[RMDB]
Record summary
Source: RMDB library OK3TST, as collected in RNAgym. Chemical mapping of a 207-nucleotide RNA with 2A3. The RNA was probed in 150 mM KOAc, 10 mM MgCl2 and 150 mM bicine (pH 8.5) at 24 C. High 2A3 reactivity points to a flexible backbone, as in loops and unpaired stretches. For 2A3 the reverse transcriptase was SuperScript II with manganese. The 2A3 profile rests on 369 reads.

RNA sequence: GGGAACGACUCGAGUAGAGUCGAAAAUCAAAGUAUUUCUUCAUAUUAACAGGAUAAAGAAGAAAAAAUCCUAUAAUGAUGACAUCUCAAUAGAUUCAGAAACAAAAACAUUGACAAGAUUAAACAUCCAUCCACAAAAGAUUGUUAUAAUGAUCAACCUAUUACGUGAGUUCGCUCACGUAAUAGGAAAAGAAACAACAACAACAAC
Reactivity to 2A3 in 0.01 (KOAc 150mM, MgCl2 10mM, bicine 150mM(pH8.5), 24C), signal-to-noise 1, nucleotides 027 to 156: u060c020a050a030a030g070u020a120u020u000u060c000u010u000c000a000u050a150u270u170a000a050c020a050g010g010a030u040a150a070a050g010a050a000g000a000a090a000a000a000a000u090c000c080u090a080u100a150a080u020g030a020u020g000a000c000a080u020c030u100c080a030a230u080a150g070a050u050u050c000a030g170a080a090a050c040a090a120a110a000a020c030a120u120u030g060a010c000a000a080g030a300u130u130a150a140a020c000a000u000c070c020a080u020c070c040a150c070a070a030a090a040g040a050u070u000g000u020u070a150u080a200a160u090g080a020u070c000a000a030